[RMDB]
RNA sequence: GGGAACGACUCGAGUAGAGUCGAAAAGUGGCGAAAGCGCCUCAGGAAGACGGAUCCGACGGUGAGGGACGAAAGCUCGGGUCACGAACCGGAUUAGAUACCCGGGUAGUCCGAGCUGUAAACGAUGCAUCGUGUUAUUGUUCGCAAUAACACGAUGAAAAGAAACAACAACAACAAC
Reactivity to DMS in 0.01 (KOAc 150mM, MgCl2 10mM, bicine 150mM(pH8.5), 24C), signal-to-noise 3, nucleotides 027 to 126: g000u010g020g000c020g020a100a160a180g010c060g010c020c030u000c050a080g000g010a090a110g000a080c080g000g000a110u010c030c020g010a070c150g000g020u010g010a090g000g000g000a110c080g000a070a080a050g010c000u000c010g010g010g000u020c220a030c010g000a160a290c000c000g000g000a010u010u000a090g000a190u020a140c150c000c000g020g000g000u000a140g000u000c000c010g000a010g030c010u020g020u000a030a050a100c100g000a130u010g010
Reactivity to 2A3 in 0.01 (KOAc 150mM, MgCl2 10mM, bicine 150mM(pH8.5), 24C), signal-to-noise 1, nucleotides 027 to 126: g020u000g000g000c030g090a120a030a110g140c010g040c020c000u000c020a020g050g040a020a020g070a020c030g000g050a060u020c020c020g010a030c040g040g010u040g060a090g000g030g010a010c030g100a200a070a010g010c010u000c000g030g050g010u120c070a000c000g010a020a010c030c010g000g000a010u020u020a050g070a090u100a050c000c010c000g000g000g030u030a000g000u030c010c000g000a010g000c000u000g000u020a010a020a020c010g000a020u100g030

The record gives the reactivity of an RNA of 177 nucleotides to DMS and 2A3.
It was measured as part of the RMDB library RFMREP.
The 2A3 profile rests on 1,681 reads.
DMS adducts were read by reverse transcription with MarathonRT.
The RNA was probed in 150 mM KOAc, 10 mM MgCl2 and 150 mM bicine (pH 8.5) at 24 C.